[RMDB]
The record gives the reactivity of an RNA of 207 nucleotides to 2A3 and DMS. It was measured as part of the RMDB library OK3TST. The 2A3 profile rests on 2,275 reads. Conditions: 150 mM KOAc, 10 mM MgCl2 and 150 mM bicine (pH 8.5), 24 C. Values cover nucleotides 27 to 156.
RNA sequence: GGGAACGACUCGAGUAGAGUCGAAAAUGUAACGCAUCGAUCUGCAUGCGAAAGGAUGGGCGUACGGAAACCAUCCACAUGUUACAACGUACGGAAACCAUCCAGGUUCUAGCAACCAACAAGGUGGCAUUGUAUGGAUGGGAAAGCAUGCUCAAGAGAGCAGCUAAUAUUUCGAUAUUAGCUGCUCAAAAGAAACAACAACAACAAC
Reactivity to 2A3 in 0.01 (KOAc 150mM, MgCl2 10mM, bicine 150mM(pH8.5), 24C), signal-to-noise 2, nucleotides 027 to 156: u190g040u040a060a020c050g020c030a050u050c050g110a130u050c070u200g010c040a000u000g000c030g100a170a030a040g070g000a020u040g000g010g040c060g030u060a020c030g060g000a080a000a030c000c010a000u030c040c000a010c010a020u120g010u080u080a040c040a110a020c040g030u050a010c020g030g060a130a090a010c000c000a000u010c010c000a040g010g020u060u000c030u030a010g010c000a050a020c010c010a010a160c060a070a140g090g020u050g020g000c030a080u010u140g030u090a080u040g030g010a020u010g040g000g000a060a000a000g030c010a020u040g000c030u060c070a060a060g260a030
Reactivity to DMS in 0.01 (KOAc 150mM, MgCl2 10mM, bicine 150mM(pH8.5), 24C), signal-to-noise 2, nucleotides 027 to 156: u000g030u000a130a070c010g020c020a160u010c020g000a120u000c090u010g010c050a060u010g030c010g050a080a080a100g010g000a040u000g000g010g010c040g060u000a070c060g040g000a140a120a110c020c000a060u010c020c070a060c090a060u000g040u000u000a100c020a130a080c040g040u000a110c040g030g000a210a150a100c010c000a020u000c000c000a070g020g010u000u010c020u010a080g030c050a060a020c000c000a100a150c170a160a130g010g060u010g030g070c010a090u000u000g010u010a130u000g000g030a090u000g010g000g030a050a040a090g000c000a030u000g030c000u010c010a050a140g000a300